[RMDB]
RNA sequence: GGGAACGACUCGAGUAGAGUCGAAAAUGUGGCUGGCAGAAAAGAAUAUCUACACGUUUGCUGCUGCCUUGACUGUGUUCUAUCUGCUUGACCUGGCUUUACAAGUGAGGUUUAUCAGUCUUAAACAAACGAGAGCAGAGUUCGCUCUGCUCUCGUUAAAAGAAACAACAACAACAAC
Reactivity to DMS in 0.01 (KOAc 150mM, MgCl2 10mM, bicine 150mM(pH8.5), 24C), signal-to-noise 2, nucleotides 027 to 126: u010g010u000g000g020c010u000g030g000c020a040g010a060a060a050a110g010a060a060u020a120u010c180u000a070c140a100c120g030u000u000u000g010c040u000g030c040u010g000c000c020u000u000g010a110c090u000g050u000g010u000u000c030u000a150u010c030u000g000c040u010u000g000a090c010c000u000g000g010c000u000u000u010a120c230a050a030g010u010g000a060g000g010u000u000u010a070u000c030a050g020u000c050u000u020a050a070a100c180a070
Reactivity to 2A3 in 0.01 (KOAc 150mM, MgCl2 10mM, bicine 150mM(pH8.5), 24C), signal-to-noise 1, nucleotides 027 to 126: u160g050u020g020g050c080u110g090g000c000a000g080a030a100a030a000g150a090a120u160a110u200c050u110a060c060a030c140g020u020u080u140g000c020u000g020c000u000g000c000c000u000u040g020a020c000u070g030u000g050u190u020c020u070a150u060c010u040g020c010u010u080g020a010c020c000u020g000g030c000u090u060u220a070c060a040a000g040u070g110a010g030g000u070u020u000a070u020c000a010g090u020c010u020u090a100a090a020c040a010